Conditions: 150 mM KOAc, 10 mM MgCl2 and 150 mM bicine (pH 8.5), 24 C.
An RNA of 177 nucleotides, treated with 2A3 and DMS and read out base by base.
The data come from the RNA Mapping Database (RMDB), library OK1LIB.
For DMS the reverse transcriptase was MarathonRT.
RNA sequence: GGGAACGACUCGAGUAGAGUCGAAAACGCAUGUGUACUCGGGACGGUGCGGCUUCGUUGGUUCGGGUCUGUCGCGGUUGGUGAUGUCUGACGCGUCAGGGCGUGUUCAGGCAGGUUUUUGAGUGCAGGAGCAUGUAGGCUUCGGCUUACAUGCUCCAAAAGAAACAACAACAACAAC
Reactivity to 2A3 in 0.01 (KOAc 150mM, MgCl2 10mM, bicine 150mM(pH8.5), 24C), signal-to-noise 4, nucleotides 027 to 126: c060g020c050a100u120g080u030g020u180a050c010u060c090g050g050g040a010c050g020g050u100g000c000g040g000c000u100u090c060g050u020u070g040g000u040u070c020g020g000g070u030c020u060g060u030c030g020c030g070g010u040u070g020g020u060g040a100u050g010u000c010u010g040a010c000g020c000g020u050c090a080g040g220g040c010g000u030g050u080u030c010a000g000g000c000a000g010g030u070u020u000u050u100g090a100g030u110g000c030a020
Reactivity to DMS in 0.01 (KOAc 150mM, MgCl2 10mM, bicine 150mM(pH8.5), 24C), signal-to-noise 2, nucleotides 027 to 126: c120g010c120a060u010g010u010g010u020a030c020u020c040g020g000g000a080c110g000g030u000g000c050g000g000c080u000u010c080g000u010u010g010g000u030u020c040g010g000g000u010c000u000g030u000c040g020c020g010g000u030u000g000g000u000g020a110u010g020u000c010u000g000a020c020g000c010g010u010c080a110g030g020g000c020g010u010g000u050u010c010a060g000g020c010a040g000g020u000u000u000u000u010g020a090g010u010g010c090a150